[RMDB]
RNA sequence: GGGAACGACUCGAGUAGAGUCGAAAAGAUAUGGAGUACUACCCACCUCCGUAGCUCAUCGAUCUCGGAAACGAGGGAGAGCGAGGGAGAGGUACUCCUAAGUCAAACUCUUACUUCGGUAAGAGAAGCCAUGCAUAAUGUUCGCAUUAUGCAUGGCAAAAGAAACAACAACAACAAC
Reactivity to DMS in 0.01 (KOAc 150mM, MgCl2 10mM, bicine 150mM(pH8.5), 24C), signal-to-noise 2, nucleotides 027 to 126: g000a130u000a150u000g010g000a010g000u010a000c030u000a150c050c030c030a300c210c010u000c000c010g020u010a300g000c000u000c000a170u000c150g000a050u010c000u010c000g000g000a050a080a110c000g010a040g000g030g010a040g020a020g010c010g000a140g000g000g000a020g000a050g040g000u000a020c010u000c000c010u010a030a090g000u000c140a080a080a130c010u000c000u010u000a020c000u000u000c120g020g000u000a000a000g000a000g010a070a110
Reactivity to 2A3 in 0.01 (KOAc 150mM, MgCl2 10mM, bicine 150mM(pH8.5), 24C), signal-to-noise 2, nucleotides 027 to 126: g070a040u180a210u300g010g000a000g000u000a000c010u170a170c020c030c030a030c010c020u000c000c000g000u010a000g020c010u000c040a300u300c150g070a100u070c010u010c030g000g040a090a100a060c020g010a010g000g000g050a030g010a000g000c010g020a060g000g000g030a010g000a000g000g010u000a000c000u020c010c000u020a070a000g120u070c130a120a060a180c010u010c020u000u010a000c000u020u150c300g100g000u000a010a000g000a010g000a000a010